[RMDB]
RNA sequence: GGGAACGACUCGAGUAGAGUCGAAAAGAAUAGUCUGUAAUUGGUUUGAACAUUGGGUUCUUGUAGUUCGAAAGAAUUACAAGAACCCAUAUCUAUCUUCCAAACCCAAUUUGACUAAGAUAGAUAAGGUAGUGAUACAUUUCGAUGUGUCGCUACCAAAAGAAACAACAACAACAAC
Reactivity to 2A3 in 0.01 (KOAc 150mM, MgCl2 10mM, bicine 150mM(pH8.5), 24C), signal-to-noise 9, nucleotides 027 to 126: g090a040a100u080a050g020u030c080u080g170u170a080a080u060u040g040g050u060u070u130g070a120a030c060a110u030u090g010g000g000u000u000c000u000u000g000u000a000g010u000u000c000g020a020a060a060g000a000a020u000u000a000c000a000a000g000a000a000c000c000c000a000u000a000u000c000u000a010u000c010u030u010c030c010a060a050a070c040c030c020a050a090u090u060u140g010a010c020u030a020a020g050a070u110a010g060a040u060a060a070
Reactivity to DMS in 0.01 (KOAc 150mM, MgCl2 10mM, bicine 150mM(pH8.5), 24C), signal-to-noise 9, nucleotides 027 to 126: g000a120a150u010a020g010u010c030u010g000u030a120a110u010u010g010g000u020u020u020g020a100a100c230a130u020u010g010g000g010u010u000c000u000u000g010u000a000g010u000u000c000g010a130a100a180g000a010a000u000u000a000c000a000a000g000a000a000c000c000c000a000u000a000u000c030u010a020u000c020u000u000c190c040a020a030a070c030c010c030a070a090u020u020u020g010a030c060u020a030a030g000a020u000a020g010a020u010a050a140